[RMDB]
RNA sequence: GGGAACGACUCGAGUAGAGUCGAAAACAUUGUUCUGAUCAUCUGAAGAUCAGCUAUUAGAAGAGAAAGAUCAGUUAAGUCCUUUGGACCUGAUCAGCUUGAUACAAGAACUACUGAUUUCAACUUUAAAACGGGUGCUACUUCGGUAGCACCCGAACUUCUCAACUUUCUUCGGAAAGUUGAGAAGAAAAGAAACAACAACAACAAC
Reactivity to 2A3 in 0.01 (KOAc 150mM, MgCl2 10mM, bicine 150mM(pH8.5), 24C), signal-to-noise 2, nucleotides 027 to 156: c060a070u100u120g020u070u090c000u000g010a000u020c010a040u020c110u240g090a180a030g000a070u010c010a000g030c010u120a220u300u130a080g080a140a030g000a040g070a080a090a040g010a030u010c010a010g000u120u160a230a020g010u000c000c000u130u260u300g000g000a000c000c000u010g000a010u020c000a000g040c020u000u060g030a010u040a150c060a070a020g040a150a010c070u120a030c050u130g030a130u030u220u180c060a110a050c020u160u190u300a010a140a040a020c010g000g000g000u000g060c020u000a000c000u000u060c140g080g000u000a000g000c000a000c000c030c000g000a000a000